[RMDB]
RNA sequence: GGGAACGACUCGAGUAGAGUCGAAAAGGAGGACACGACACCGCCGACGUGUAGGACGACAUCGACGAGCGAGACGAGUCGGAGUCCAGCGUGAGGGAGCGACUUCGCAGAGCGUGGCCGCGCCAGUCUUGGCACUGACACCACGCGUCGUGCGCCACGCUAAGAUAAAGUUCGCUUUAUCUUAGCGAAAAGAAACAACAACAACAAC
Reactivity to DMS in 0.01 (KOAc 150mM, MgCl2 10mM, bicine 150mM(pH8.5), 24C), signal-to-noise 3, nucleotides 027 to 156: g000g010a170g000g010a100c030a070c010g010a050c040a130c030c030g040c020c010g030a040c010g000u010g010u010a140g020g010a120c030g010a160c040a140u010c030g040a070c020g010a300g020c020g000a180g030a300c130g020a240g010u000c000g000g010a240g030u000c000c020a100g010c030g000u010g010a170g010g030g020a160g020c020g000a060c040u000u010c040g000c030a220g000a130g000c010g010u010g000g040c030c040g020c130g020c000c020a080g000u010c060u000u010g020g010c010a080c000u010g010a060c060a160c000c000a020c000g000c010g010u000c010g020u000g020c010g000c030c020a110
Reactivity to 2A3 in 0.01 (KOAc 150mM, MgCl2 10mM, bicine 150mM(pH8.5), 24C), signal-to-noise 6, nucleotides 027 to 156: g120g040a050g010g010a030c010a010c040g060a000c010a010c050c050g070c020c020g050a040c020g020u080g020u090a110g020g030a020c020g030a040c050a170u150c030g030a040c010g010a030g090c070g090a090g060a210c070g010a040g030u010c000g000g000a020g010u000c010c010a010g000c010g010u030g040a180g040g050g010a080g030c020g060a100c050u160u120c100g000c080a030g010a010g120c000g000u000g020g000c050c040g020c040g000c030c010a120g020u120c060u250u190g030g000c080a020c060u070g010a020c010a020c050c000a010c000g000c010g020u010c010g030u010g010c080g010c010c010a040